Chemical mapping of a 177-nucleotide RNA with 2A3 and DMS.
Values are in units of 0.01, from 0 to 300, in steps of 10.
The reactions ran in a buffer of 150 mM KOAc, 10 mM MgCl2 and 150 mM bicine (pH 8.5), at 24 C.
For DMS the reverse transcriptase was MarathonRT.
[RMDB]
RNA sequence: GGGAACGACUCGAGUAGAGUCGAAAAGGUGGAGCCAUGUACUACCUGGAAGCAGAGCAUCAUGGGAUAGCCCCAAGCAGGGGGAUGAGGAUUGGUGUCCAGAUUCACAACACCUGGCUGAAUCCUGGCCAGCUGUAAGAUUCGUCUUACAGCUGGCAAAAGAAACAACAACAACAAC
Reactivity to 2A3 in 0.01 (KOAc 150mM, MgCl2 10mM, bicine 150mM(pH8.5), 24C), signal-to-noise 1, nucleotides 027 to 126: g000g020u020g010g010a000g040c000c010a040u110g020u000a040c020u060a050c000c010u010g020g060a080a000g040c060a020g000a000g060c020a060u050c000a010u040g040g000g070a020u090a060g060c010c010c000c020a030a010g190c100a070g060g030g000g010g070a060u050g040a020g000g010a060u040u030g090g070u060g070u020c000c020a050g030a040u100u060c130a040c040a200a000c040a060c000c010u010g030g000c020u020g020a030a010u030c000c010u020g130
Reactivity to DMS in 0.01 (KOAc 150mM, MgCl2 10mM, bicine 150mM(pH8.5), 24C), signal-to-noise 2, nucleotides 027 to 126: g000g040u000g000g000a150g010c050c020a060u000g030u010a080c010u010a060c110c000u000g000g010a130a090g010c060a110g010a100g000c060a030u020c020a030u020g010g000g010a070u000a100g010c020c020c010c060a080a150g030c190a140g000g000g000g000g000a080u010g030a120g000g010a040u000u000g010g010u000g000u000c020c020a070g000a040u000u010c080a100c160a150a150c120a050c040c010u010g000g000c080u000g010a100a050u010c020c000u000g010